RNA sequence: GGGAACGACUCGAGUAGAGUCGAAAAGAACACGCAGCGUCUCCGUGUCCUGGGCCAGGCCACCGCGGCCUUUUCAAGCGGGGACGGCAGGACGGCGAGAGUCCUUAGCAGCGAGGGUCGUCGGCUCGCUCCAGGUGUCGUUCGCGAUACCUGGAGCAAAAGAAACAACAACAACAAC
Reactivity to 2A3 in 0.01 (KOAc 150mM, MgCl2 10mM, bicine 150mM(pH8.5), 24C), signal-to-noise 8, nucleotides 027 to 126: g030a040a030c040a010c090g020c040a060g050c020g050u000c010u000c010c000g030u030g030u040c020c030u050g010g020g010c020c020a060g070g030c030c030a150c040c070g090c070g030g030c010c020u080u040u050u090c080a060a010g020c010g010g010g000g010a010c000g020g000c010a010g020g020a020c020g040g070c060g040a120g010a020g070u030c020c000u050u090a070g040c060a010g010c030g030a060g030g030g020u020c000g010u010c020g020g020c010u020c050
Reactivity to DMS in 0.01 (KOAc 150mM, MgCl2 10mM, bicine 150mM(pH8.5), 24C), signal-to-noise 3, nucleotides 027 to 126: g020a090a060c070a100c040g000c040a080g020c010g010u010c000u020c050c000g050u000g000u010c060c030u030g000g000g020c040c040a080g000g050c020c040a120c150c130g000c070g020g010c040c050u000u000u020u010c140a130a240g010c010g000g000g000g000a060c040g000g000c090a050g000g000a020c020g000g040c080g010a100g020a120g000u010c010c040u000u030a090g010c050a040g010c050g000a130g010g010g010u000c020g010u000c070g000g000c030u010c030